[RMDB]
RNA sequence: GGGAACGACUCGAGUAGAGUCGAAAAACUUACGCCACGGUAAGAUGGCACCCUUGCUCCCCGCCUAUUUGGAGCUAAUGCGUAUCGACAAGUCUAAGUAUAAAAGAGUGUUGGUGCCACAAAUCGAAAUUGGAUGUUAGUUCGCUAACAUCCAAUUAAAAGAAACAACAACAACAAC
Reactivity to DMS in 0.01 (KOAc 150mM, MgCl2 10mM, bicine 150mM(pH8.5), 24C), signal-to-noise 6, nucleotides 027 to 126: a100c050u000u010a050c060g020c080c110a120c140g020g000u000a040a050g010a210u000g000g000c030a020c010c010c090u000u000g000c010u000c000c010c050c040g020c230c110u000a040u000u010u000g010g000a070g020c040u000a050a070u010g020c040g010u000a120u000c120g020a090c060a040a110g000u000c010u010a020a030g000u000a040u010a060a040a070a080g010a040g010u010g010u000u000g010g020u000g000c010c010a060c160a040a100a070u000c090g010a060
Reactivity to 2A3 in 0.01 (KOAc 150mM, MgCl2 10mM, bicine 150mM(pH8.5), 24C), signal-to-noise 3, nucleotides 027 to 126: a000c030u060u050a060c050g090c100c080a050c010g080g020u050a040a030g050a120u020g000g000c000a000c000c010c000u010u080g000c010u040c020c020c010c000g010c040c010u040a070u040u030u040g020g000a050g020c030u040a070a020u100g010c020g050u110a140u220c060g050a070c070a030a010g030u000c010u040a010a090g030u040a090u070a170a140a020a000g030a010g010u020g000u010u030g010g010u000g010c000c000a010c000a010a110a040u110c050g070a020